[RMDB]
RNA sequence: GGGAACGACUCGAGUAGAGUCGAAAAGAUAUGGAGAGAACUACAGCCGAGGGAGCUAUGAAGUCGGAAACGAUGGAGCUCCGUAGGCUGCUCUCCUAAGUCAAACGUUAUGGUUCGCCAUAACGAACUAACACUUUAGGUUCGCCUAAAGUGUUAGAAAAGAAACAACAACAACAAC
Reactivity to DMS in 0.01 (KOAc 150mM, MgCl2 10mM, bicine 150mM(pH8.5), 24C), signal-to-noise 6, nucleotides 027 to 126: g010a050u000a300u000g000g000a010g010a020g010a100a050c090u030a300c000a020g010c000c000g020a250g000g000g000a010g010c010u000a190u010g010a130a190g010u000c000g000g010a140a090a170c010g010a010u000g000g000a010g010c000u000c000c010g000u000a260g010g010c020u000g000c000u000c010u000c000c000u000a020a120g010u000c020a080a070a270c020g010u000u000a000u000g010g020u000u010c230g020c010c000a000u000a010a010c000g010a060a150